Structure probing data (DMS and 2A3) for a 207-nucleotide construct. For DMS the reverse transcriptase was MarathonRT. The RNA was probed in 150 mM KOAc, 10 mM MgCl2 and 150 mM bicine (pH 8.5) at 24 C. Reactivities are given for positions 27 through 156. It was measured as part of the RMDB library M2RFPK. The 2A3 profile rests on 3,026 reads. Reactivities are rounded to 0.1 and cut off at 0 and 3.
RNA sequence: GGGAACGACUCGAGUAGAGUCGAAAAACAGUCAGUACGCUGACUGAGGGAAACGGGAGCCGGGCUUGGGACAAGAGCCAUGCCAAGUCCAAGGCCAAGUAGGCUCUAGUGAUGGUACGCCAUCACAAAAACUGGUCUACCUUCGGGUAGACCAGAAGUUUAAAUAACCGUUCGCGGUUAUUUAAACAAAAGAAACAACAACAACAAC
Reactivity to DMS in 0.01 (KOAc 150mM, MgCl2 10mM, bicine 150mM(pH8.5), 24C), signal-to-noise 1, nucleotides 027 to 156: a080c010a000g000u010c000a040g030u010a080c220g060c000u000g010a100c010u000g010a180g030g000g000a120a090a130c080g020g000g010a060g050c030c000g000g000g000c010u040u020g010g000g010a030c020a040a270g000a090g040c000c130a150u010g010c060c010a040a300g000u000c000c000a080a020g030g010c000c000a040a110g010u000a200g000g000c010u000c010u020a060g040u000g010a030u000g010g010u000a080c230g110c060c000a040u000c000a000c000a060a040a110a080a070c000u010g040g010u010c000u000a020c000c000u020u010c300g060g020g040u010a000g010a010c000c000a000g000a000a090
Reactivity to 2A3 in 0.01 (KOAc 150mM, MgCl2 10mM, bicine 150mM(pH8.5), 24C), signal-to-noise 3, nucleotides 027 to 156: a000c010a000g000u000c000a000g020u070a040c200g030c130u000g000a000c000u010g010a070g040g040g010a070a130a170c160g050g040g040a050g010c020c040g010g020g000c020u010u010g040g000g070a030c030a070a060g000a010g040c040c040a040u140g000c000c010a040a010g020u010c000c020a070a040g050g000c030c020a050a030g060u070a070g050g000c000u000c020u020a040g000u000g000a000u000g000g000u040a010c230g030c030c010a000u010c000a000c000a000a050a000a000a000c000u000g000g000u000c000u000a000c000c010u010u030c100g110g000g000u000a000g000a000c000c000a000g000a000a000